An RNA of 177 nucleotides, treated with 2A3 and DMS and read out base by base.
The RNA was probed in 150 mM KOAc, 10 mM MgCl2 and 150 mM bicine (pH 8.5) at 24 C.
It was measured as part of the RMDB library OK2TRN.
Values cover nucleotides 27 to 126.
[RMDB]
RNA sequence: GGGAACGACUCGAGUAGAGUCGAAAAAUUGGCUUCGAUUGCAGCAAAGAGUUGCCCAUCCAUCAACAGUGCCUGGGCGUAGUCAAGCAUAGCGGCACCAUUGUCUGGAUCCAGCAUUAGCGCCCGCAACUGCAGUGCAGUUCGCUGCACUGCAGUUAAAAGAAACAACAACAACAAC
Reactivity to 2A3 in 0.01 (KOAc 150mM, MgCl2 10mM, bicine 150mM(pH8.5), 24C), signal-to-noise 1, nucleotides 027 to 126: a010u090u070g070g010c010u030u030c030g050a060u000u190g120c060a070g000c020a080a060a020g120a010g050u100u100g100c000c000c000a050u110c020c010a070u100c000a010a050c020a040g040u000g060c000c050u050g000g030g020c010g040u040a010g070u060c060a100a000g020c070a130u170a070g080c080g000g020c000a010c010c010a060u020u140g110u060c090u040g000g050a050u090c060c020a020g010c050a110u030u160a060g010c000g000c040c000c020g080c060
Reactivity to DMS in 0.01 (KOAc 150mM, MgCl2 10mM, bicine 150mM(pH8.5), 24C), signal-to-noise 2, nucleotides 027 to 126: a090u020u000g010g020c080u000u010c040g020a090u010u000g010c050a090g020c100a030a150a140g030a100g000u000u010g030c020c030c020a100u000c010c050a060u010c030a040a140c150a060g000u000g010c040c010u020g000g000g010c040g000u000a050g010u010c090a090a080g010c140a090u010a120g000c110g010g090c020a060c020c020a050u000u010g000u010c080u000g000g010a050u020c090c030a070g000c020a140u010u000a080g040c080g030c070c030c010g060c140